The record gives the reactivity of an RNA of 177 nucleotides to DMS and 2A3. DMS (dimethyl sulfate) methylates the pairing face of unpaired adenines and cytosines.
RNA sequence: GGGAACGACUCGAGUAGAGUCGAAAAUGGUCGGUAACGCCGAAAACAGAUCCUCGUUCCAGGUAUCGAGCAUGGUACAUAGCGCGGGGCCCGCGCUAAAGCCCAAGUCGUCGAGGAGACGGUUAAACGGAUAGAGACAUUUCGAUGUCUCUAUCCGAAAAGAAACAACAACAACAAC
Reactivity to DMS in 0.01 (KOAc 150mM, MgCl2 10mM, bicine 150mM(pH8.5), 24C), signal-to-noise 3, nucleotides 027 to 126: u030g010g010u000c020g020g040u010a110a100c210g060c030c010g030a050a070a080a140c100a080g000a110u010c030c020u020c000g010u020u000c010c000a040g000g000u010a050u010c020g010a050g020c060a060u040g010g010u000a040c120a190u010a060g000c000g000c010g020g000g040g030c190c080c020g000c000g000c010u020a020a110a090g000c150c000c040a080a060g010u010c010g000u010c010g000a140g010g010a300g000a020c040g000g000u010u010a050a080a210
Reactivity to 2A3 in 0.01 (KOAc 150mM, MgCl2 10mM, bicine 150mM(pH8.5), 24C), signal-to-noise 5, nucleotides 027 to 126: u080g010g000u040c020g030g040u080a140a050c120g040c030c000g010a060a030a010a030c030a020g050a110u040c000c010u020c040g040u030u020c030c020a040g080g050u050a040u080c030g020a030g120c050a070u150g030g000u050a050c040a080u060a020g000c000g000c000g030g030g150g080c070c080c000g000c000g000c000u020a040a020a010g020c020c000c010a030a020g090u070c010g000u000c010g010a050g040g050a030g060a010c000g010g010u030u100a080a120a010
Source information:
The RNA was probed in 150 mM KOAc, 10 mM MgCl2 and 150 mM bicine (pH 8.5) at 24 C. For DMS the reverse transcriptase was MarathonRT.